[RMDB]
RNA sequence: GGGAACGACUCGAGUAGAGUCGAAAAAGGGCUGGAUUCGUCCAGCCCUGCACAUUCGUACGCAACGAUGCGUACGUCAUUACGCAAAUGACGUAAAGCGUAGAACCACGGACUUCGGUCCGUGGAACUAGUUACAAAGUUUCGACUUUGUAACUAGAAAAGAAACAACAACAACAAC
Reactivity to DMS in 0.01 (KOAc 150mM, MgCl2 10mM, bicine 150mM(pH8.5), 24C), signal-to-noise 9, nucleotides 027 to 126: a020g010g000g010c000u000g010g010a020u000u010c170g010u000c000c000a010g010c000c000c000u000g010c110a070c170a140u010u000c020g010u000a030c010g010c010a080a130c230g010a100u000g000c040g010u000a000c010g000u000c110a040u000u010a040c140g010c110a060a060a050u010g000a050c100g010u000a050a070a180g000c010g010u000a060g010a120a210c010c000a010c000g000g000a020c000u000u010c160g020g010u000c000c000g020u000g000g000a010a050
Reactivity to 2A3 in 0.01 (KOAc 150mM, MgCl2 10mM, bicine 150mM(pH8.5), 24C), signal-to-noise 9, nucleotides 027 to 126: a000g010g000g000c000u010g000g010a020u040u050c150g050u020c050c000a000g010c000c000c000u000g000c000a020c000a100u100u100c020g020u020a010c010g000c040a140a080c190g200a190u170g010c000g010u010a000c000g000u000c000a050u040u120a020c040g010c080a060a090a210u150g080a050c070g080u120a040a050a060g010c010g020u030a040g040a090a040c000c000a000c000g000g000a000c000u050u070c210g070g000u000c000c000g000u000g000g000a000a000
Structure probing data (DMS and 2A3) for a 177-nucleotide construct. The 2A3 profile rests on 38,183 reads. The reactions ran in a buffer of 150 mM KOAc, 10 mM MgCl2 and 150 mM bicine (pH 8.5), at 24 C.